[RMDB]
RNA sequence: GGGAACGACUCGAGUAGAGUCGAAAACUAUGCAGAUUCGUCUGCAUAGAGACCCGAUGAAGCGGCACUUACACAGCUUCAUACACGUAACAAGUGCAAUAAAGGGACGAGGGUUCGCCCUCGUCAACCAACAAUAAACCUUCGGGUUUAUUGUUGGAAAAGAAACAACAACAACAAC
Reactivity to 2A3 in 0.01 (KOAc 150mM, MgCl2 10mM, bicine 150mM(pH8.5), 24C), signal-to-noise 7, nucleotides 027 to 126: c000u010a000u000g010c000a000g020a040u020u080c100g140u010c080u000g000c000a000u000a000g000a000g010a030c010c010c010g000a020u030g000a000a000g010c030g050g020c080a010c060u070u140a050c170a010c030a070g000c010u010u000c000a010u050a040c120a000c050g130u120a150a010c040a130a030g010u020g030c020a000a120u170a250a100a050g220g050g000a000c000g000a000g010g010g010u040u070c170g120c010c000c000u010c000g000u000c000a000a010
Reactivity to DMS in 0.01 (KOAc 150mM, MgCl2 10mM, bicine 150mM(pH8.5), 24C), signal-to-noise 4, nucleotides 027 to 126: c010u000a000u000g010c000a010g000a040u010u010c180g010u000c000u000g010c000a010u000a000g000a090g010a160c000c000c000g040a080u010g010a010a010g010c000g020g010c020a030c040u020u010a300c140a090c100a100g000c020u010u010c010a010u000a140c130a060c170g010u020a090a060c170a060a030g020u010g010c050a160a080u020a060a090a130g000g010g000a000c000g000a020g000g000g020u000u010c230g000c000c000c000u000c000g020u000c010a040a080